[RMDB]
Source information
This 207-nucleotide RNA was probed chemically with 2A3. For 2A3 the reverse transcriptase was SuperScript II with manganese. Values cover nucleotides 27 to 156. The 2A3 profile rests on 631 reads. The RNA was probed in 150 mM KOAc, 10 mM MgCl2 and 150 mM bicine (pH 8.5) at 24 C.

RNA sequence: GGGAACGACUCGAGUAGAGUCGAAAAGUGUGCUAUACUAGUAAGGUUGAAUGAAUCAACCCUUGGUGCUUAGGUUCUUUCACCAAGCAUAUUACACGCGGAUAACCGCCAAAGGAGAAAAGAUGAACUGCCCGACGAUUCUUCGGAAUCGUCGGAACGGUAAGGUCUGGUUCGCCAGACCUUACCGAAAAGAAACAACAACAACAAC
Reactivity to 2A3 in 0.01 (KOAc 150mM, MgCl2 10mM, bicine 150mM(pH8.5), 24C), signal-to-noise 1, nucleotides 027 to 156: g050u030g010u000g010c000u080a010u070a250c060u050a030g060u070a160a150g060g010u010u060g050a140a170u120g030a060a180u080c000a000a000c020c020c000u030u020g020g000u020g000c010u020u080a080g000g000u080u040c050u020u070u040c020a040c020c010a010a000g000c000a010u010a060u070u180a030c100a000c010g010c070g000g030a080u030a170a200c010c020g020c000c010a190a040a040g050g100a110g080a020a050a040a000g050a040u100g010a080a000c040u090g090c000c010c000g000a000c000g000a000u000u000c000u000u010c200g000g000a020a000u000c000g000u000c000g000g000a030a000